The data come from the RNA Mapping Database (RMDB), library OK2TRN. Structure probing data (DMS and 2A3) for a 177-nucleotide construct. For DMS, 2,139 sequencing reads were counted. For 2A3 the reverse transcriptase was SuperScript II with manganese.
RNA sequence: GGGAACGACUCGAGUAGAGUCGAAAAGAACAGCAGCCAGAGCUACGUGCUGACCAAGGGGUGGAGCCGAUUCGUGAGGGAGAAGGGCCUCCGCGCCGGCGACACCAUAGUCUUCUCCCGCUCGGCGAUUUGUACCUUCGUUCGCGAAGGUACAAAUAAAAGAAACAACAACAACAAC
Reactivity to DMS in 0.01 (KOAc 150mM, MgCl2 10mM, bicine 150mM(pH8.5), 24C), signal-to-noise 2, nucleotides 027 to 126: g000a120a150c080a050g010c060a080g000c030c030a140g000a050g000c030u010a100c130g000u000g020c060u010g000a130c050c070a090a130g000g000g010g040u000g030g000a210g010c020c020g020a070u000u000c040g020u000g010a050g010g000g010a120g030a050a090g010g010g010c010c010u000c020c030g000c060g010c220c020g000g010c010g000a190c030a040c020c030a070u000a040g000u000c020u000u000c070u000c000c050c040g010c050u010c020g010g000c040g010
Reactivity to 2A3 in 0.01 (KOAc 150mM, MgCl2 10mM, bicine 150mM(pH8.5), 24C), signal-to-noise 2, nucleotides 027 to 126: g050a100a030c020a010g100c040a030g000c010c000a080g010a040g080c070u120a080c130g080u090g030c020u010g020a050c050c040a080a110g100g040g000g020u020g010g030a010g000c000c030g010a030u070u080c060g040u130g060a030g030g060g030a200g090a090a140g060g080g060c000c020u000c010c010g000c020g010c010c010g010g000c010g020a000c020a010c010c010a010u040a010g000u000c030u050u040c030u050c000c000c010g010c000u010c000g020g000c040g010
Description
For 2A3, 2,795 sequencing reads were counted. Values cover nucleotides 27 to 126. The RNA was probed in 150 mM KOAc, 10 mM MgCl2 and 150 mM bicine (pH 8.5) at 24 C.